RNA sequence: GGGAACGACUCGAGUAGAGUCGAAAACGAGUGCUUCGGCACUCGCAAGAGCGUACUACGACUGGUCCAAUGAUGCGUGGAACUACAGACCUCCCAAAUAGGAGGUCUGCCACGUUGAGGACCGUCGUAUCGCCAAGGGGUCGGAUUCGUCCGACAACGAACCUCUUUAUUUCGAUAAAGAGGUUCGAAAAGAAACAACAACAACAAC
Reactivity to 2A3 in 0.01 (KOAc 150mM, MgCl2 10mM, bicine 150mM(pH8.5), 24C), signal-to-noise 5, nucleotides 027 to 156: c010g000a010g010u010g020c020u070u200c300g100g000c010a000c010u010c000g020c010a070a040g070a050g000c010g030u120a090c050u000a000c010g050a010c110u300g010g010u020c020c010a140a300u190g040a020u130g050c020g010u000g000g030a060a100c100u110a040c300a000g000a000c000c010u060c000c000c010a170a300a070u300a080g000g010a000g000g010u000c000u000g000c000c000a000c000g000u000u010g010a000g000g000a000c000c000g000u000c000g010u000a010u040c000g000c010c000a050a080g110g000g010g000u000c000g000g000a020u070u060c140g050u030c070c010g010a010c000a000a010
Reactivity to DMS in 0.01 (KOAc 150mM, MgCl2 10mM, bicine 150mM(pH8.5), 24C), signal-to-noise 3, nucleotides 027 to 156: c010g000a040g010u020g020c000u000u010c300g080g040c000a010c000u010c000g020c010a060a070g020a300g020c010g020u010a060c130u000a010c000g010a040c000u010g120g000u000c000c000a090a130u000g010a070u010g000c000g020u000g010g020a100a160c060u010a300c010a020g000a020c000c000u000c000c000c030a030a170a230u000a040g020g010a030g000g020u000c000u000g010c000c010a030c010g020u000u000g010a050g050g000a020c010c000g000u000c000g000u000a000u010c010g010c010c040a080a120g010g020g020g010u010c020g000g010a100u000u010c250g000u000c010c000g000a030c010a040a120